[RMDB]
RNA sequence: GGGAACGACUCGAGUAGAGUCGAAAAUGGACAUCUUUCGAGAUGUCCAAAAUACCGAGAAUGCGACUCGGUAUAUAAAACGCACCCUUGGAAACAAGGGAAAAAACCAGUUCUUCGGAACUGGUAAUCUACCUAGAGGUUUCGACCUCUAGGUAGAAAAAGAAACAACAACAACAAC
Reactivity to DMS in 0.01 (KOAc 150mM, MgCl2 10mM, bicine 150mM(pH8.5), 24C), signal-to-noise 1, nucleotides 027 to 126: u010g010g010a030c000a010u000c000u000u010u000c160g000a040g000a020u000g000u000c010c000a000a030a040a090u000a140c010c000g060a010g000a040a210u030g000c030g000a100c000u000c000g000g010u010a010u010a010u010a000a010a010a000c020g000c060a010c000c000c000u000u000g000g000a210a070a140c010a010a010g010g000g020a000a030a050a030a040a030c010c000a010g000u000u000c010u000u020c240g010g000a000a000c010u000g000g010u010a010a010
This 177-nucleotide RNA was probed chemically with DMS.
The DMS profile rests on 1,358 reads.
The RNA was probed in 150 mM KOAc, 10 mM MgCl2 and 150 mM bicine (pH 8.5) at 24 C.